[RMDB]
RNA sequence: GGGAACGACUCGAGUAGAGUCGAAAACAAAUCGGCAACCAGCGUGAGGCAAGCACGCGUUCGCUUUCCUGCAGUGCUUCACCAGACUGAUCAACCGCCUCUUCUUCUUCUGUCAGCUCCACCGAUCCUAAUACCACGCAUUCGUGCGUGGUAUUAGAAAAGAAACAACAACAACAAC
Reactivity to DMS in 0.01 (KOAc 150mM, MgCl2 10mM, bicine 150mM(pH8.5), 24C), signal-to-noise 4, nucleotides 027 to 126: c070a050a100a090u040c110g020g000c030a080a070c030c080a060g020c050g030u010g000a100g010g000c060a070a080g010c050a050c050g010c050g000u010u010c080g020c050u000u000u020c020c010u010g000c030a060g010u000g010c030u010u020c060a060c040c050a080g000a120c060u000g000a110u030c070a070a070c050c030g000c020c020u000c030u010u000c030u000u010c010u000u000c010u000g000u010c070a100g030c010u000c010c010a080c020c040g010a070u020c050
Reactivity to 2A3 in 0.01 (KOAc 150mM, MgCl2 10mM, bicine 150mM(pH8.5), 24C), signal-to-noise 9, nucleotides 027 to 126: c040a010a070a040u100c030g030g010c020a030a070c020c020a050g020c020g050u040g040a050g040g080c060a040a040g030c020a010c040g030c020g030u080u070c060g010c040u060u050u040c010c010u030g010c020a040g040u010g070c000u040u050c010a040c050c010a030g080a110c030u060g020a090u080c040a040a060c020c010g030c010c010u030c000u050u010c010u040u000c000u040u010c010u030g090u050c030a020g020c020u020c020c010a060c020c020g020a040u050c000